[RMDB]
RNA sequence: GGGAACGACUCGAGUAGAGUCGAAAAAUUAUGUAGUAAAGAUGCUAGUGUACCAAUAUGCGAAUCAUUUUUGCAUCAUUUACGCGCACACAAUACAGAAGAUAGCAAAGAGAUGAUCGAUUAUAUUCUAAGACAACAGUCUGCGGACUUUAAACAGGCAUUCAAAUGCGUUCGCGCAUUUGAAUGCAAAAGAAACAACAACAACAAC
Reactivity to 2A3 in 0.01 (KOAc 150mM, MgCl2 10mM, bicine 150mM(pH8.5), 24C), signal-to-noise 1, nucleotides 027 to 156: a000u200u180a020u120g000u010a040g000u000a000a040a100g030a030u040g000c000u050a010g010u000g040u120a060c030c020a100a040u100a050u150g120c050g130a150a070u070c050a080u010u120u030u070u060g040c000a000u000c000a000u070u000u000a000c020g000c000g000c000a000c000a000c000a060a040u120a130c010a010g130a000a000g000a110u020a050g010c050a020a020a020g110a010g000a040u070g000a020u000c020g010a020u090u060a080u120a020u110u060c090u130a040a060g020a000c010a000a000c060a000g000u000c000u000g070c160g030g000a000c000u060u130u150a000a000a010c040a000g020